Structure probing data (2A3) for a 207-nucleotide construct. The RNA was probed in 150 mM KOAc, 10 mM MgCl2 and 150 mM bicine (pH 8.5) at 24 C. For 2A3, 494 sequencing reads were counted.

RNA sequence: GGGAACGACUCGAGUAGAGUCGAAAAAGCCAGGGAUUUUCGUCCUCAAGUUUCUUGAUUUUCUUCUUAACCUUCCGGGACUCCCUCUCGAGAUCCUCUAACUUCUUUCUUCCGUUCACCCACUGCUCGAGGAUCUCUUCUCUUCCAUCGCGUUUCUACUUACCCAAUAGUUCGCUAUUGGGUAAGUAAAAGAAACAACAACAACAAC
Reactivity to 2A3 in 0.01 (KOAc 150mM, MgCl2 10mM, bicine 150mM(pH8.5), 24C), signal-to-noise 1, nucleotides 027 to 156: a010g050c070c020a030g050g000g000a070u120u180u160u230c030g010u020c000c000u070c030a100a080g010u020u100u120c090u120u100g060a120u200u080u110u050c080u070u030c040u140u090a080a070c030c000u050u040c070c030g000g040g000a060c000u010c010c010c000u040c010u050c040g010a000g010a010u010c010c020u040c030u070a070a120c030u110u060c040u000u250u140c040u190u060c070c030g070u060u190c070a180c080c000c030a090c070u080g000c010u040c100g020a000g000g000a010u020c000u010c000u030u050c000u040c000u000u090c080c060a250u140c060g060c030g120u000u000u000c000u030